Conditions: 150 mM KOAc, 10 mM MgCl2 and 150 mM bicine (pH 8.5), 24 C. Chemical mapping of a 177-nucleotide RNA with 2A3 and DMS. For DMS the reverse transcriptase was MarathonRT. 2A3 adducts were read by reverse transcription with SuperScript II with manganese.

[RMDB]
RNA sequence: GGGAACGACUCGAGUAGAGUCGAAAACCUCCCGAACCAGCGCACGACGACGGCGUCGCGGCCGUCUACGACAUCGCGGUUGCGCGUCGGCGCCGACCCGCUUGAGCGGUCCCCGACGCGUCAACGUUUAUGCUAUCCCCUUCGGGGGAUAGCAUAAAAAAGAAACAACAACAACAAC
Reactivity to 2A3 in 0.01 (KOAc 150mM, MgCl2 10mM, bicine 150mM(pH8.5), 24C), signal-to-noise 2, nucleotides 027 to 126: c000c040u020c000c000c010g000a070a030c030c020a020g020c030g010c020a040c050g130a020c010g000a010c030g070g020c020g030u120c100g010c010g050g000c000c010g020u000c010u020a010c000g110a040c000a070u110c040g000c000g080g000u000u040g000c000g010c000g000u010c000g000g070c100g010c030c060g050a060c060c020c010g050c080u250u280g080a060g020c040g000g000u040c000c020c000c000g000a000c000g000c000g000u010c000a000a000c020g000u020
Reactivity to DMS in 0.01 (KOAc 150mM, MgCl2 10mM, bicine 150mM(pH8.5), 24C), signal-to-noise 2, nucleotides 027 to 126: c080c060u000c000c030c000g010a060a070c070c080a080g000c010g020c300a210c050g010a030c120g000a020c030g000g060c000g010u000c250g000c130g000g010c000c020g000u000c010u000a120c090g020a250c090a080u000c040g000c030g020g030u000u000g000c000g030c000g000u000c000g000g000c150g000c170c060g000a010c100c020c030g020c060u000u050g010a060g000c090g000g030u000c020c060c000c020g000a000c030g000c000g000u000c060a050a000c030g020u020